Source: RMDB library RFM100, as collected in RNAgym. This 177-nucleotide RNA was probed chemically with 2A3.

RNA sequence: GGGAACGACUCGAGUAGAGUCGAAAAUUAAUAAACCAUCUAAAUUGCCUCGAAUAAUAUCAUUUAACUUUCUACUACCUAAACUGCCGCCCAUAACAAGUAACACUUUUUUGUCAUUAGUAAAGUUUCGUUGUAGUCAUUUCGAUGACUACAACGAAAAAGAAACAACAACAACAAC
Reactivity to 2A3 in 0.01 (KOAc 150mM, MgCl2 10mM, bicine 150mM(pH8.5), 24C), signal-to-noise 2, nucleotides 027 to 126: u020u010a000a100u160a000a060a040c080c020a020u010c030u100a020a150a300u070u060g000c020c000u060c000g060a220a080u160a230a080u110a210u080c010a020u000u110u300a080a010c020u090u100u000c000u060a220c000u050a040c000c000u010a070a070a070c000u000g000c000c010g000c000c000c000a010u010a000a000c030a090a020g200u160a080a000c040a030c060u100u100u000u000u130u250g010u040c000a020u000u190a040g000u010a020a020a010g000u000u000